[RMDB]
Structure probing data (DMS and 2A3) for a 177-nucleotide construct. 2A3 adducts were read by reverse transcription with SuperScript II with manganese. The data come from the RNA Mapping Database (RMDB), library OK1LIB. The RNA was probed in 150 mM KOAc, 10 mM MgCl2 and 150 mM bicine (pH 8.5) at 24 C.

RNA sequence: GGGAACGACUCGAGUAGAGUCGAAAAGUCACGUGGUACGCCACGUGACAACCGGAAACGGAGAUGACGAUCGGGCGCAUCUAGAGAAAUCUUAAACGCCAAAGCGAGGAGUUACGACUCCUCGCAAGUAAUACUCGGACUUCGGUCCGAGUAUUACAAAAGAAACAACAACAACAAC
Reactivity to DMS in 0.01 (KOAc 150mM, MgCl2 10mM, bicine 150mM(pH8.5), 24C), signal-to-noise 2, nucleotides 027 to 126: g020u010c000a000c000g090u000g030g010u000a100c250g000c000c000a000c000g050u000g030a000c020a000a030c020c010g020g020a100a000a110c150g030g000a090g000a170u010g000a080c230g000a180u000c130g030g000g060c000g080c080a250u020c130u010a000g010a020g010a040a100a100u070c000u000u000a060a130a080c040g020c000c030a010a040a160g000c000g000a000g000g030a010g000u000u000a090c210g010a080c000u000c000c000u000c000g000c010a000a000
Reactivity to 2A3 in 0.01 (KOAc 150mM, MgCl2 10mM, bicine 150mM(pH8.5), 24C), signal-to-noise 3, nucleotides 027 to 126: g000u010c000a000c000g010u020g010g000u040a080c300g060c030c000a010c010g030u010g000a000c010a000a000c010c000g050g090a040a050a020c030g070g000a050g020a040u080g060a010c100g040a050u250c100g080g050g000c000g000c040a040u030c040u130a010g010a000g030a080a100a060u000c030u060u060a090a110a040c080g010c040c030a110a030a000g000c000g000a000g000g000a000g010u030u060a070c190g030a010c050u000c000c000u020c000g000c000a000a000